Notes
An RNA of 207 nucleotides, treated with 2A3 and read out base by base. The reactions ran in a buffer of 150 mM KOAc, 10 mM MgCl2 and 150 mM bicine (pH 8.5), at 24 C.

RNA sequence: GGGAACGACUCGAGUAGAGUCGAAAAUCAACGAGGUGGUCGACGGAGCGGGGAUCUCCUACGCGUACCGCCUCUCGGAGGAGAUGAGCGCCGACACCACCGACGCGGUGCGUGCUUUCGAGGUGGUCACCGGGGUCUACGGACUCCCGGACCUCUGCCUCCAAAGGUGAUUCGUCACCUUUGGAGGAAAAGAAACAACAACAACAAC
Reactivity to 2A3 in 0.01 (KOAc 150mM, MgCl2 10mM, bicine 150mM(pH8.5), 24C), signal-to-noise 1, nucleotides 027 to 156: u100c020a000a100c040g000a010g020g010u010g000g020u030c040g000a070c050g090g000a020g080c240g000g070g050g000a050u080c020u010c010c000u020a020c060g010c020g080u130a030c000c000g000c040c040u000c000u000c000g000g030a020g030g050a160g030a030u160g030a030g070c020g050c020c010g040a040c040a000c000c000a020c000c040g140a130c040g030c090g120g000u010g040c150g000u020g010c030u040u100u100c080g000a080g000g010u070g000g070u000c020a030c050c000g000g000g000g000u000c020u030a110c210g070g000a000c010u290c140c000c000g010g010a020c000c000u020c010u010g000